[RMDB]
RNA sequence: GGGAACGACUCGAGUAGAGUCGAAAACACAUUCUAUUCGUAGAAUGUGGAACGUAGAGAGAUCGACAGCGUCGCAGCUAUGUCCAACGAGGAAGAGCGCGCAGGGAUCGGGCUUCGGCCCGAUCAACACGUGACAUUGGUUCGCCAAUGUCACGUGAAAAGAAACAACAACAACAAC
Reactivity to DMS in 0.01 (KOAc 150mM, MgCl2 10mM, bicine 150mM(pH8.5), 24C), signal-to-noise 2, nucleotides 027 to 126: c000a000c000a080u000u000c000u000a000u000u000c240g060u000a010g000a000a000u010g020u000g010g000a130a040c120g010u000a070g000a070g000a110g020a060u010c050g000a090c160a090g020c080g020u000c070g030c050a070g020c020u000a050u010g010u000c010c030a070a140c190g010a090g000g000a040a040g000a080g010c060g000c030g010c070a100g000g000g000a010u000c000g000g010g000c000u000u010c160g030g000c000c000c000g000a000u000c020a090a080
Reactivity to 2A3 in 0.01 (KOAc 150mM, MgCl2 10mM, bicine 150mM(pH8.5), 24C), signal-to-noise 1, nucleotides 027 to 126: c000a000c000a000u010u000c000u020a020u060u040c130g070u050a000g010a000a030u020g000u010g000g010a050a030c000g010u130a010g010a010g010a000g000a150u130c040g080a040c050a050g050c010g030u160c050g000c030a070g010c030u040a020u240g060u000c000c010a070a090c200g080a060g020g090a040a060g030a000g010c030g000c000g000c020a040g090g110g010a000u000c000g030g020g000c020u070u050c210g070g000c000c000c000g020a000u010c010a000a010